Overview
An RNA of 177 nucleotides, treated with DMS and read out base by base. For DMS, 665 sequencing reads were counted. It was measured as part of the RMDB library 15KREP. Conditions: 150 mM KOAc, 10 mM MgCl2 and 150 mM bicine (pH 8.5), 24 C.
RNA sequence: GGGAACGACUCGAGUAGAGUCGAAAACAGACCCCAAAUUUGUUGAUAAAUACUAUGCUUUUCUUAAUAAGCACUUUUCUAUGAUGAUACUGUCUGAUGACGGUGUCGUUUGCUAUAAUAGUGAUUACAAGUACAAACACUUCGGUGUUUGUACUUGAAAAGAAACAACAACAACAAC
Reactivity to DMS in 0.01 (KOAc 150mM, MgCl2 10mM, bicine 150mM(pH8.5), 24C), signal-to-noise 1, nucleotides 027 to 126: c160a200g010a230c090c000c020c070a010a160a100u010u000u000g000u000u010g020a140u010a110a090a100u000a120c180u000a040u010g010c020u000u000u000u000c060u010u020a110a140u010a070a040g000c010a020c030u060u000u020u000c150u020a120u000g000a070u000g010a010u000a020c000u000g000u000c010u020g010a120u000g010a000c000g000g010u010g010u000c000g020u000u010u010g010c210u000a040u000a030a020u000a040g010u000g000a090u000u000a070